[RMDB]
RNA sequence: GGGAACGACUCGAGUAGAGUCGAAAAGAAAUUGCGAAGUUACUAAAUUUGCCUGAUAACGCACACACGCAGCAAUGGCGUAAGACGUAAUGCGAAAUCAAGCAGUUAGCGGGCUGUGGAUUGCAGCGCCUAUCCCUCGAUUCGUCGAGGGAUAGGCAAAAGAAACAACAACAACAAC
Reactivity to 2A3 in 0.01 (KOAc 150mM, MgCl2 10mM, bicine 150mM(pH8.5), 24C), signal-to-noise 3, nucleotides 027 to 126: g050a000a050a020u150u070g030c080g060a040a020g070u090u130a090c030u040a060a070a140u180u160u030g010c000c000u000g000a030u020a050a000c000g020c000a000c010a000c000a000c030g000c000a000g010c080a090a300u200g300g000c000g010u000a000a010g050a020c020g000u010a080a000u040g000c000g000a090a010a020u000c010a010a000g000c000a020g000u030u010a030g020c120g010g020g000c010u010g020u060g070g140a100u060u280g000c000a000g020c000
Reactivity to DMS in 0.01 (KOAc 150mM, MgCl2 10mM, bicine 150mM(pH8.5), 24C), signal-to-noise 2, nucleotides 027 to 126: g010a040a080a080u010u020g000c120g020a070a050g000u000u000a210c030u000a000a020a080u010u030u000g010c020c050u000g000a000u000a010a280c020g020c010a000c170a030c180a010c050g010c000a070g000c030a240a160u030g020g030c000g000u040a020a040g050a110c020g080u030a170a030u030g000c000g010a020a100a000u000c010a000a000g050c000a030g030u040u000a000g010c150g000g000g000c000u000g000u000g020g000a100u020u000g020c020a060g000c060
Chemical mapping of a 177-nucleotide RNA with 2A3 and DMS. It was measured as part of the RMDB libraries RFM100 and RFMREP. For DMS the reverse transcriptase was MarathonRT. 2A3 is a SHAPE reagent: it acylates the 2'-hydroxyl of flexible nucleotides of all four kinds.